[RMDB]
RNA sequence: GGGAACGACUCGAGUAGAGUCGAAAAAUCAUUCGUGAUAGUGUUUCUGUGCACUAUGUUGAUGAAUCCUUUAUUAAUUAGUGCUAUAGAUGAAGGUUUAUGGCCUGCAGGUAUGUGGUAUUCUCAUUUAUUGCAAGAGAAUAAUACUUAUACAGUGCUCAUUGACUUUGUUCGCAAAGUCAAUGAGAAAAGAAACAACAACAACAAC
Reactivity to DMS in 0.01 (KOAc 150mM, MgCl2 10mM, bicine 150mM(pH8.5), 24C), signal-to-noise 2, nucleotides 027 to 156: a080u010c020a100u000u000c120g010u010g000a080u000a040g020u000g020u010u000u020c090u030g040u020g030c000a010c010u000a000u000g020u020u000g010a060u010g000a080a160u000c080c100u000u010u010a060u040u000a050a100u000u010a080g010u000g000c020u000a110u000a070g000a070u010g000a080a060g030g020u000u000u000a070u020g010g000c000c050u000g000c080a110g010g010u000a010u010g010u000g040g020u000a030u000u000c000u000c000a160u000u000u000a090u030u020g010c120a100a210g020a130g000a040a010u010a030a050u000a020c050u000u010a100u000a060c040a120g030u010g010
Reactivity to 2A3 in 0.01 (KOAc 150mM, MgCl2 10mM, bicine 150mM(pH8.5), 24C), signal-to-noise 4, nucleotides 027 to 156: a010u020c030a050u130u130c070g100u150g130a050u030a020g000u000g040u050u150u120c180u140g160u110g000c000a000c000u020a030u080g100u070u130g020a030u000g000a040a050u080c000c000u050u190u170a180u060u110a190a070u060u110a030g020u030g090c020u020a010u040a120g020a030u060g110a170a050g150g000u040u020u040a030u050g010g000c000c030u030g050c060a050g130g000u090a040u100g020u020g040g010u020a010u040u010c000u000c030a110u100u120u290a180u180u220g060c060a110a080g010a010g000a040a000u000a020a010u020a060c010u050u040a000u000a100c020a050g050u110g130